An RNA of 177 nucleotides, treated with DMS and 2A3 and read out base by base.

[RMDB]
RNA sequence: GGGAACGACUCGAGUAGAGUCGAAAACGGGGUCGCCGACGUGACAUGGCUGGAUUGUCUUGGCAUUCCAACGGUUCAGGCGGUGCGCCCGGCAUCGCUGACGUUGUCGGUCAGCCAGGGCAAAGCCGCGGAGUUUGCUAUUCGUAGCAAACUCCGCAAAAGAAACAACAACAACAAC
Reactivity to DMS in 0.01 (KOAc 150mM, MgCl2 10mM, bicine 150mM(pH8.5), 24C), signal-to-noise 2, nucleotides 027 to 126: c030g000g020g000g020u000c140g040c010c000g020a060c110g000u000g000a080c100a090u000g020g010c040u000g010g000a170u000u000g020u000c000u000u000g000g020c000a200u000u010c050c010a030a020c010g010g000u000u000c110a170g020g020c000g040g000u000g000c090g020c020c030c040g000g000c010a020u000c000g030c000u000g000a050c040g000u000u010g000u010c120g030g000u010c230a120g010c020c030a030g000g010g010c020a030a040a110g040c060c050
Reactivity to 2A3 in 0.01 (KOAc 150mM, MgCl2 10mM, bicine 150mM(pH8.5), 24C), signal-to-noise 1, nucleotides 027 to 126: c020g000g020g020g000u020c020g030c040c020g040a010c050g090u090g020a010c020a160u200g070g030c040u060g070g050a110u000u020g020u030c000u020u000g030g020c020a050u210u050c000c010a000a000c000g040g080u120u060c060a060g110g040c000g000g000u010g020c030g050c030c100c000g050g010c000a010u030c000g000c000u000g010a010c010g000u010u080g060u070c050g000g030u050c080a020g000c020c000a000g000g000g000c000a060a030a000g010c000c030
For 2A3, 1,396 sequencing reads were counted. In probing experiments dimethyl sulfate is read out at A N1 and C N3, which are open when not base-paired.